Chemical mapping of a 177-nucleotide RNA with DMS and 2A3. For DMS the reverse transcriptase was MarathonRT. The 2A3 profile rests on 2,685 reads. The reactions ran in a buffer of 150 mM KOAc, 10 mM MgCl2 and 150 mM bicine (pH 8.5), at 24 C. Values cover nucleotides 27 to 126. The DMS profile rests on 1,706 reads.
RNA sequence: GGGAACGACUCGAGUAGAGUCGAAAAGAUCUAUCCUUCGGGAUAGAUCAAACUAUAGCCCGGCCAAAACGGGAACGCACCCGAAAACCCGGGCAUAUGCGAAAACUCGCCACUUCGGUGGCGAGAACACUAAGAGCAAGUUCGCUUGCUCUUAGUGAAAAGAAACAACAACAACAAC
Reactivity to DMS in 0.01 (KOAc 150mM, MgCl2 10mM, bicine 150mM(pH8.5), 24C), signal-to-noise 2, nucleotides 027 to 126: g020a010u000c000u000a000u010c000c000u000u010c190g050g010g010a030u000a000g000a000u000c000a030a100a100c040u010a060u000a130g020c010c000c030g000g030c060c030a050a080a120a100c020g000g000g000a080a180c240g010c230a080c000c000c000g020a040a040a300a290c300c020c020g020g040g000c040a010u000a020u000g010c220g000a070a120a090a190c020u000c000g010c000c000a010c000u020u010c260g010g000u010g000g000c010g000a000g000a060a100
Reactivity to 2A3 in 0.01 (KOAc 150mM, MgCl2 10mM, bicine 150mM(pH8.5), 24C), signal-to-noise 2, nucleotides 027 to 126: g000a000u020c000u000a010u010c010c010u010u080c260g080g000g000a000u000a000g000a000u000c000a000a010a000c000u020a010u060a080g000c000c000c000g000g000c040c020a030a070a060a030c020g000g000g030a060a040c100g040c080a100c010c000c000g040a040a070a020a030c000c000c000g040g070g000c000a010u040a000u030g120c030g110a040a040a050a090c000u000c000g000c010c000a000c030u050u090c210g130g000u050g040g000c000g020a000g000a000a000